[RMDB]
Structure probing data (2A3 and DMS) for a 177-nucleotide construct.
RNA sequence: GGGAACGACUCGAGUAGAGUCGAAAAACAAGGCCAAUCAAUGAUUUAUUCAUUAGAUGACAUCCACGUAGCAACUAUGUUAAAGCAAGCCAUACAUCACGCGAAUCAUCCUAAAGAAAGUGGGUUAUCUCUACAUAUCAUUCGUGAUAUGUAGAGAAAAAGAAACAACAACAACAAC
Reactivity to 2A3 in 0.01 (KOAc 150mM, MgCl2 10mM, bicine 150mM(pH8.5), 24C), signal-to-noise 8, nucleotides 027 to 126: a000c050a040a050g080g020c020c020a020a060u050c020a010a020u030g060a070u070u130u280a140u180u060c010a020u010u060a090g020a050u040g030a010c010a030u040c010c000a030c070g040u050a020g030c020a020a050c040u090a040u230g040u090u140a120a030a000g040c030a040a010g010c020c010a030u040a060c000a030u050c030a020c060g020c010g020a030a020u030c020a030u020c010c030u080a070a070a040g110a060a080a000g080u060g010g030g010u060u060a090
Reactivity to DMS in 0.01 (KOAc 150mM, MgCl2 10mM, bicine 150mM(pH8.5), 24C), signal-to-noise 9, nucleotides 027 to 126: a070c120a110a100g000g030c030c030a090a060u000c040a040a010u000g010a030u000u010u010a110u040u000c010a010u010u000a090g020a030u000g010a050c050a080u000c010c020a050c090g010u000a090g010c060a050a080c110u000a050u010g010u000u000a060a080a100g010c050a050a070g010c030c020a050u000a050c070a030u000c070a030c060g010c040g010a050a050u010c050a050u000c010c030u000a030a060a100g000a030a050a090g020u000g000g000g010u000u010a120
2A3 adducts were read by reverse transcription with SuperScript II with manganese. The reactions ran in a buffer of 150 mM KOAc, 10 mM MgCl2 and 150 mM bicine (pH 8.5), at 24 C. For DMS, 14,885 sequencing reads were counted. It was measured as part of the RMDB library OK2TRN.